Chemical mapping of a 207-nucleotide RNA with 2A3 and DMS.
DMS adducts were read by reverse transcription with MarathonRT.
The RNA was probed in 150 mM KOAc, 10 mM MgCl2 and 150 mM bicine (pH 8.5) at 24 C.
[RMDB]
RNA sequence: GGGAACGACUCGAGUAGAGUCGAAAAUGUAUGGACCAAACCAUUCUCCAUGGAUGUAUCUCAAGCCACAGCAGUUGUAUCUUAGGGGAGAGGAAAGAGUUUUGGGGAAUAACUUUGACUCUAAGACACAUUUGCCUCAUAGACUAACUUUAGAACCAUCUGACUCCAUAUUCGUAUGGAGUCAGAUAAAAGAAACAACAACAACAAC
Reactivity to 2A3 in 0.01 (KOAc 150mM, MgCl2 10mM, bicine 150mM(pH8.5), 24C), signal-to-noise 4, nucleotides 027 to 156: u180g020u050a030u070g030g030a050c100c000a120a040a050c010c000a030u060u020c040u000c040c040a060u090g040g010a050u030g050u130a130u050c040u010c040a060a070g030c030c050a060c030a050g040c020a020g060u040u020g030u060a040u040c020u010u060a040g010g020g000g020a030g020a000g000g020a040a090a020g060a010g010u010u040u100u170g030g010g010g080a040a080u120a090a020c020u040u050u070g050a050c000u000c000u030a010a000g030a000c010a000c000a090u050u030u080g020c000c000u060c060a120u110a070g070a040c070u080a090a000c000u100u090u150a060g040a060a020c170c000
Reactivity to DMS in 0.01 (KOAc 150mM, MgCl2 10mM, bicine 150mM(pH8.5), 24C), signal-to-noise 1, nucleotides 027 to 156: u000g000u000a080u010g010g000a140c040c070a090a170a140c070c030a160u000u000c030u000c020c000a200u000g010g000a110u000g000u000a120u020c050u000c050a090a090g000c040c020a100c160a080g010c060a070g040u000u000g060u010a060u000c020u000u000a070g000g000g000g010a270g030a070g000g000a020a070a100g000a160g010u000u000u010u000g020g020g030g020a070a080u010a110a300c080u000u000u000g000a300c020u000c010u000a030a040g000a060c000a030c030a130u010u050u000g030c030c000u000c040a100u000a150g010a040c070u000a030a120c010u010u000u000a050g010a030a120c230c050